The record gives the reactivity of an RNA of 177 nucleotides to DMS and 2A3. For 2A3 the reverse transcriptase was SuperScript II with manganese. The RNA was probed in 150 mM KOAc, 10 mM MgCl2 and 150 mM bicine (pH 8.5) at 24 C. Values cover nucleotides 27 to 126. 2A3 is a SHAPE reagent: it acylates the 2'-hydroxyl of flexible nucleotides of all four kinds.
RNA sequence: GGGAACGACUCGAGUAGAGUCGAAAAUGACGUGCAAAUCGAUCGUCAAACUUGGGUAUAGGGGCGAAAGACUAAUCGAACCAUCUAGUAGCUGGUUCCCUCCGAAAUUUCCCUCAGGAUAGCAGCAGUGUUUUAACUAUUUCGAUAGUUAAAACACAAAAGAAACAACAACAACAAC
Reactivity to DMS in 0.01 (KOAc 150mM, MgCl2 10mM, bicine 150mM(pH8.5), 24C), signal-to-noise 9, nucleotides 027 to 126: u010g010a040c040g010u000g010c150a050a160a140u020c090g010a130u010c030g000u000c020a040a080a090c050u000u010g010g000g010u000a070u010a080g010g010g000g010c050g000a040a080a130g000a080c120u030a070a100u010c060g000a040a070c030c040a050u010c040u000a080g000u010a100g000c050u000g010g000u000u000c000c020c010u000c020c010g010a040a060a130u010u010u000c010c000c010u010c130a120g000g000a050u010a050g010c050a060g020c120a160
Reactivity to 2A3 in 0.01 (KOAc 150mM, MgCl2 10mM, bicine 150mM(pH8.5), 24C), signal-to-noise 9, nucleotides 027 to 126: u080g020a010c020g030u060g040c080a040a050a140u140c070g040a050u070c010g030u010c010a030a050a090c060u070u080g090g000g020u130a090u100a160g020g010g010g020c040g040a080a050a020g060a070c080u110a040a090u080c050g030a030a020c010c010a010u030c020u020a090g070u100a020g100c020u010g050g000u030u030c000c000c000u010c010c000g020a050a050a040u030u040u020c000c010c000u020c060a020g030g010a040u050a080g070c020a000g000c020a010